[RMDB]
RNA sequence: GGGAACGACUCGAGUAGAGUCGAAAACAGCCGGGCGCCAAUGUCGCGAUAGGGCAUGCCCAGUAGCAGUAGCUCGGCGACUUCGCGUUCGCGAUCGGAUAGCGGCGAGCCCGCCGGUGGCUGGCGCGUGCCCAGGAGAAUUCGUUCUCCUGGGCACAAAAGAAACAACAACAACAAC
Reactivity to 2A3 in 0.01 (KOAc 150mM, MgCl2 10mM, bicine 150mM(pH8.5), 24C), signal-to-noise 4, nucleotides 027 to 126: c030a010g040c020c000g010g010g000c000g000c010c040a080a050u230g060u040c040g010c020g100a120u200a210g030g000g000c060a060u100g010c000c010c070a060g050u160a030g000c040a020g020u300a030g020c000u010c000g020g000c000g000a010c000u050u050c010g000c010g020u050u040c030g010c060g080a110u080c060g060g040a130u110a130g040c020g000g000c020g020a050g020c010c000c020g050c020c010g050g020u050g030g000c010u020g040g000c020g000c030
Reactivity to DMS in 0.01 (KOAc 150mM, MgCl2 10mM, bicine 150mM(pH8.5), 24C), signal-to-noise 2, nucleotides 027 to 126: c130a150g010c030c000g000g020g000c010g030c040c080a100a050u040g060u000c050g010c010g000a170u020a070g050g000g000c030a100u000g030c010c030c090a110g010u030a050g040c010a090g060u020a110g000c000u000c000g000g000c010g000a020c030u000u000c240g020c010g010u010u010c050g030c030g020a040u010c130g010g000a100u000a130g030c050g030g000c040g040a100g000c060c060c010g000c050c030g000g030u010g000g000c010u000g040g030c060g000c100